Structure probing data (2A3 and DMS) for a 177-nucleotide construct. For 2A3 the reverse transcriptase was SuperScript II with manganese.
[RMDB]
RNA sequence: GGGAACGACUCGAGUAGAGUCGAAAAUGUCAAGGAUGCUGUCAUCCAAUUUGUGAAGGUGUCUGAGCUGGCAGGCGAGAUAAGUGGAGCAAGGCUCAAUGUUCCGGAACUGAUUGCAGAAGUUGCAGUAGUAUCCACUAUUCGUAGUGGAUACUACAAAAGAAACAACAACAACAAC
Reactivity to 2A3 in 0.01 (KOAc 150mM, MgCl2 10mM, bicine 150mM(pH8.5), 24C), signal-to-noise 6, nucleotides 027 to 126: u140g030u050c040a040a080g030g000a020u040g020c090u110g090u180c010a020u000c000c040a020a100u120u090u110g100u020g040a070a030g050g000u020g000u000c040u060g020a020g030c020u020g030g000c020a020g040g030c020g040a060g010a070u140a140a060g050u060g050g010a020g020c030a070a060g060g000c020u020c030a020a060u090g010u030u000c010c000g000g020a040a030c030u070g040a140u080u080g020c010a010g030a170a030g120u160u070g000c030a010
Reactivity to DMS in 0.01 (KOAc 150mM, MgCl2 10mM, bicine 150mM(pH8.5), 24C), signal-to-noise 8, nucleotides 027 to 126: u000g030u000c070a100a140g000g010a060u000g010c110u010g010u000c040a070u000c050c050a110a110u010u010u010g010u000g020a120a080g000g020u000g000u000c030u000g010a110g010c040u000g010g020c060a050g010g010c050g010a070g000a070u000a050a090g010u010g000g000a070g010c050a060a090g000g010c040u010c060a070a080u000g000u000u000c020c020g010g010a090a060c080u000g010a100u000u000g010c040a060g010a090a100g010u000u000g010c080a130